[RMDB]
RNA sequence: GGGAACGACUCGAGUAGAGUCGAAAAGAUAUGGACGUGUUGACGGGAGAAACGUAUUCGGAAACGAAUAUGUUUCUUUGAUCGUCACCACGUCCUAAGUCAAAAGGACUUUGUUCGCAAAGUCCAACGACUCGAUUAAGUUCGCUUAAUCGAGUCGAAAAGAAACAACAACAACAAC
Reactivity to 2A3 in 0.01 (KOAc 150mM, MgCl2 10mM, bicine 150mM(pH8.5), 24C), signal-to-noise 1, nucleotides 027 to 126: g010a000u070a030u140g000g010a000c000g000u010g000u000u030g020a010c030g070g080g030a110g000a010a010a000c010g000u000a020u000u020c010g000g010a070a050a040c000g010a010a010u000a000u000g000u000u000u010c000u020u040u050g030a030u020c010g000u000c020a000c010c010a010c000g000u010c000c000u000a010a000g010u000c030a000a060a030a150g000g000a000c000u000u010u020g060u110u080c180g040c140a040a030a000g000u000c000c010a000a010
Reactivity to DMS in 0.01 (KOAc 150mM, MgCl2 10mM, bicine 150mM(pH8.5), 24C), signal-to-noise 2, nucleotides 027 to 126: g040a040u010a300u010g000g010a000c000g030u010g000u000u020g010a010c000g010g000g010a010g020a020a020a020c010g040u010a000u000u000c000g020g010a120a100a260c000g020a020a000u000a000u000g010u000u000u000c010u000u010u000g000a080u010c000g010u000c000a020c080c000a010c000g030u000c000c010u000a000a090g010u010c070a090a050a120a160g000g000a030c000u000u000u000g000u000u000c260g040c010a000a000a030g010u010c010c010a080a070
Source: RMDB library TTRDES, as collected in RNAgym. An RNA of 177 nucleotides, treated with 2A3 and DMS and read out base by base. The reactions ran in a buffer of 150 mM KOAc, 10 mM MgCl2 and 150 mM bicine (pH 8.5), at 24 C. Values are in units of 0.01, from 0 to 300, in steps of 10.